[RMDB]
RNA sequence: GGGAACGACUCGAGUAGAGUCGAAAACGACUCGGAGUUGGUGCAAAGGCGCGCAAAGUUAAAAGCUCUGAGCGUGUUACUUUGAGAGAUUCUGACGCUAUUGAGCGUAUAUUGAUUUUGAUUGGAGACUAUAGGGACUCUUCGGAGUCCCUAUAGUAAAAGAAACAACAACAACAAC
Reactivity to DMS in 0.01 (KOAc 150mM, MgCl2 10mM, bicine 150mM(pH8.5), 24C), signal-to-noise 2, nucleotides 027 to 126: c060g020a120c050u000c030g010g000a050g010u000u000g010g030u010g020c040a080a080a080g000g010c090g010c030g000c040a030a040a140g000u000u000a070a140a180a210g010c070u000c030u000g010a190g020c020g010u000g010u010u000a100c010u000u010u000g000a120g000a180g000a070u000u000c030u000g000a020c010g000c010u000a130u010u000g000a070g010c010g010u000a070u010a090u020u000g000a110u000u000u000u000g000a300u000u000g010g010a110g000